[RMDB]
Chemical mapping of a 207-nucleotide RNA with 2A3. High 2A3 reactivity points to a flexible backbone, as in loops and unpaired stretches. Conditions: 150 mM KOAc, 10 mM MgCl2 and 150 mM bicine (pH 8.5), 24 C. The 2A3 profile rests on 504 reads. The data come from the RNA Mapping Database (RMDB), library OK3TST.
RNA sequence: GGGAACGACUCGAGUAGAGUCGAAAAAGUUCUAGUCCUCACCUAAGAUCAGACUAACAUGGCCCUCAAAGCAAGAGCACUUGGUUGGGCUUUGUGGUGGGGAUCAGUGUCUCAUUUUUAGUCCCAAAUUAAAAACGAGAUUUUGGGCUGUACAUCAACCAUGCGAUAGGUUCGCCUAUCGCAUGGUAAAAGAAACAACAACAACAAC
Reactivity to 2A3 in 0.01 (KOAc 150mM, MgCl2 10mM, bicine 150mM(pH8.5), 24C), signal-to-noise 1, nucleotides 027 to 156: a000g020u060u050c020u020a020g000u000c000c000u000c000a010c000c000u150a230a000g030a190u210c000a030g090a280c070u090a000a030c020a040u080g020g000c000c010c020u030c010a020a070a050g030c070a150a050g010a010g050c030a040c130u020u050g180g000u140u060g000g030g020c000u000u030u030g030u010g000g010u000g000g020g000g000a000u030c030a000g020u000g000u050c010u020c110a110u090u070u030u050u230a030g030u080c020c000c000a020a040a020u030u050a030a000a000a010a000c140g050a120g040a060u040u040u060u060g030g000g000c020u020g050u090a110c050a170u120c100a090